[RMDB]
RNA sequence: GGGAACGACUCGAGUAGAGUCGAAAAGAAAGAAAGAAAGAAACCGUCUCUGCUAGACUCACGGUAACCACGUUGAAAUCGCAACGAAAGAAGCUCGCACUCAACUUCAACGGCUUAACGAGUGCAAAAAACUUACUGAUCUUCGGAUCAGUAAGAAGAUGAAAAGCUAGUUCGCUAGCUUUUCAUCAAAAGAAACAACAACAACAAC
Reactivity to 2A3 in 0.01 (KOAc 150mM, MgCl2 10mM, bicine 150mM(pH8.5), 24C), signal-to-noise 2, nucleotides 027 to 156: g040a020a070a000g070a050a110a030g030a040a190a020g030a080a090a000c010c020g030u020c020u010c020u100g080c030u040a030g020a050c010u020c090a020c030g000g030u040a050a080c020c010a010c030g000u000u030g080a110a130a090u160c100g010c080a020a010c050g030a040a000a070g020a010a010g020c100u140c220g000c040a000c000u000c000a010a110c000u020u020c010a060a000c020g020g010c030u040u020a020a010c030g000a000g000u000g000c000a000a060a040a000a010a060c000u000u000a000c000u000g000a000u010c000u030u030c080g060g000a000u000c000a010g010u000a000a000g000a000a000
Reactivity to DMS in 0.01 (KOAc 150mM, MgCl2 10mM, bicine 150mM(pH8.5), 24C), signal-to-noise 1, nucleotides 027 to 156: g010a070a050a110g030a130a030a110g030a030a160a170g010a180a250a060c050c030g030u000c010u000c040u000g000c090u000a070g010a130c020u000c040a080c000g040g010u000a040a200c000c000a040c070g000u000u010g000a050a040a110u000c080g050c000a050a070c000g010a050a080a130g020a060a150g000c170u010c060g000c000a030c010u000c000a040a300c010u020u000c040a040a090c040g000g090c040u010u000a010a110c300g020a030g010u000g020c010a000a050a030a100a050a080c000u000u000a000c000u010g000a010u000c000u000u000c220g040g070a010u020c000a000g010u010a000a010g010a010a060